[RMDB]
RNA sequence: GGGAACGACUCGAGUAGAGUCGAAAACGGCGGCAGCCGCACCGAGAUCGCGGCCGUCGCCGAGCGGAACUGGCCCGACGACGCGCGCGAACGCUGCCGCCAUCUCGGCGUCGCGAACGGCGAAAGACCCCUACUAGGGGUUCGCCCCUAGUAGGGGAAAAGAAACAACAACAACAAC
Reactivity to 2A3 in 0.01 (KOAc 150mM, MgCl2 10mM, bicine 150mM(pH8.5), 24C), signal-to-noise 2, nucleotides 027 to 126: c030g000g000c000g010g000c000a010g040c010c070g070c020a050c050c120g050a090g010a130u110c030g000c040g140g060c040c000g000u010c000g030c010c000g000a010g000c050g040g150a140a130c100u190g070g000c040c000c010g010a020c020g000a000c010g050c020g000c000g000c010g020a070a020c030g000c020u030g000c000c000g000c010c010a010u000c000u010c020g070g040c010g000u030c010g010c040g120a150a090c020g060g000c030g020a030a040a030g140a040
Reactivity to DMS in 0.01 (KOAc 150mM, MgCl2 10mM, bicine 150mM(pH8.5), 24C), signal-to-noise 2, nucleotides 027 to 126: c130g030g010c040g020g000c000a010g010c060c080g010c060a050c100c090g000a140g020a120u010c120g020c040g030g020c030c030g040u000c040g010c000c000g000a010g010c070g000g010a100a100c180u020g020g000c020c000c000g010a060c040g010a050c040g020c260g020c010g010c040g010a050a140c070g010c020u010g000c040c000g000c040c030a020u010c020u000c030g000g010c020g000u000c020g010c040g010a050a120c060g000g020c020g010a080a090a090g000a230